[RMDB]
RNA sequence: GGGAACGACUCGAGUAGAGUCGAAAAGAUAUGGAAGACUUCACGACAUGUCGGUGCAUCGGAAACGAUGCCCGACAACAGCGUGAGUCUUCCUAAGUCAAACGUCAAUGGGUUCGCCCAUUGACGACCCCAUUUACUAGUUCGCUAGUAAAUGGGGAAAAGAAACAACAACAACAAC
Reactivity to DMS in 0.01 (KOAc 150mM, MgCl2 10mM, bicine 150mM(pH8.5), 24C), signal-to-noise 6, nucleotides 027 to 126: g000a030u000a200u010g000g000a010a000g000a020c000u010u010c010a010c000g020a090c110a150u010g020u000c000g000g000u020g030c000a000u000c000g010g000a060a040a100c000g010a010u000g000c010c010c000g000a000c000a010a010c300a180g010c010g000u000g000a030g010u000c000u000u000c000c000u000a000a070g000u000c020a110a110a290c010g000u000c000a010a010u000g000g000g010u000u020c300g010c010c000c000a010u000u000g000a010c000g010a070
Reactivity to 2A3 in 0.01 (KOAc 150mM, MgCl2 10mM, bicine 150mM(pH8.5), 24C), signal-to-noise 8, nucleotides 027 to 126: g000a010u020a010u080g000g010a000a000g000a000c020u210u090c300a010c030g200a080c130a280u280g000u010c010g020g120u260g010c000a000u010c000g000g020a020a020a000c000g000a010u000g000c020c010c000g000a000c000a000a000c020a040g020c000g000u000g000a000g000u000c000u010u010c000c000u000a000a000g000u000c030a090a070a070c020g000u000c000a010a000u000g000g000g080u060u120c300g190c030c000c000a000u000u000g000a000c000g000a010